RNA sequence: GGGAACGACUCGAGUAGAGUCGAAAAUCGAAAUGCUCUGGUCUAAAGUUAACAUUUCUAGAUUAUGGACAAAGGUCAAGGAAAUUCCUAAGGGACCAGGAACUUCAGCGGAACCGAAUCAGACCUGUAGCGUAUACAGGUUCGCCUGUAUACGCUAAAAAGAAACAACAACAACAAC
Reactivity to DMS in 0.01 (KOAc 150mM, MgCl2 10mM, bicine 150mM(pH8.5), 24C), signal-to-noise 3, nucleotides 027 to 126: u010c060g030a040a060a080u020g010c040u020c010u000g030g010u000c020u010a110a100a120g010u000u030a100a100c180a060u000u000u000c050u020a070g000a040u010u000a100u010g010g020a070c150a040a140a110g000g000u000c000a060a120g000g000a020a030a130u010u000c030c010u000a070a120g000g000g010a060c040c040a040g000g000a050a050c130u010u020c100a060g010c100g000g000a080a080c040c000g000a090a080u010c090a110g010a040c030c010u010g010
Reactivity to 2A3 in 0.01 (KOAc 150mM, MgCl2 10mM, bicine 150mM(pH8.5), 24C), signal-to-noise 5, nucleotides 027 to 126: u050c030g010a010a000a010u070g000c040u000c000u050g050g030u030c050u160a150a100a110g050u090u090a100a060c020a050u000u010u020c030u020a060g040a140u050u070a080u270g140g000a030c080a090a110a030g050g020u020c020a050a090g030g010a040a140a130u090u030c010c000u040a050a090g070g000g010a020c010c010a010g020g030a050a010c060u180u080c040a010g050c010g040g010a030a050c000c040g040a080a070u060c020a040g060a080c000c000u020g050
Structure probing data (DMS and 2A3) for a 177-nucleotide construct. The DMS profile rests on 6,106 reads. The RNA was probed in 150 mM KOAc, 10 mM MgCl2 and 150 mM bicine (pH 8.5) at 24 C. For 2A3, 4,354 sequencing reads were counted. For DMS the reverse transcriptase was MarathonRT. Reactivities are rounded to 0.1 and cut off at 0 and 3.